[RMDB]
RNA sequence: GGGAACGACUCGAGUAGAGUCGAAAAACUCGCCAGCUUACGAGCUGGCGAGACAGGACAAUGGUGAGUGCCGGUGCCUGCCCUGGGGCCGUCCCUGCGCAGGGGCCGGGUGCUCACCGCAUCUGAAUAUAUGAGCUUGGUUCGCCAAGCUCAUAUAAAAAGAAACAACAACAACAAC
Reactivity to 2A3 in 0.01 (KOAc 150mM, MgCl2 10mM, bicine 150mM(pH8.5), 24C), signal-to-noise 1, nucleotides 027 to 126: a020c000u000c030g000c000c030a000g000c000u050u010a120c300g060a010g010c000u000g030g000c000g000a000g000a000c020a000g060g020a020c090a150a100u250g000g000u020g000a000g000u010g000c000c000g000g020u090g240c000c000u010g000c030c000c020u020g000g020g000g040c190c030g300u300c010c000c000u020g000c030g000c000a000g000g000g000g000c000c060g100g020g070u050g020c000u010c000a000c000c000g020c000a040u000c000u080g050a090a050
Reactivity to DMS in 0.01 (KOAc 150mM, MgCl2 10mM, bicine 150mM(pH8.5), 24C), signal-to-noise 2, nucleotides 027 to 126: a120c000u000c000g000c010c000a040g010c000u000u000a150c220g020a020g040c010u000g010g000c000g000a000g000a010c140a060g000g000a100c100a070a070u020g000g020u020g000a030g060u000g030c010c000g000g000u010g000c000c000u000g010c000c030c100u010g050g000g000g010c250c210g010u020c000c000c000u000g010c300g000c000a000g000g010g010g000c000c000g000g000g030u020g000c020u000c000a000c000c010g000c230a050u020c010u000g030a280a280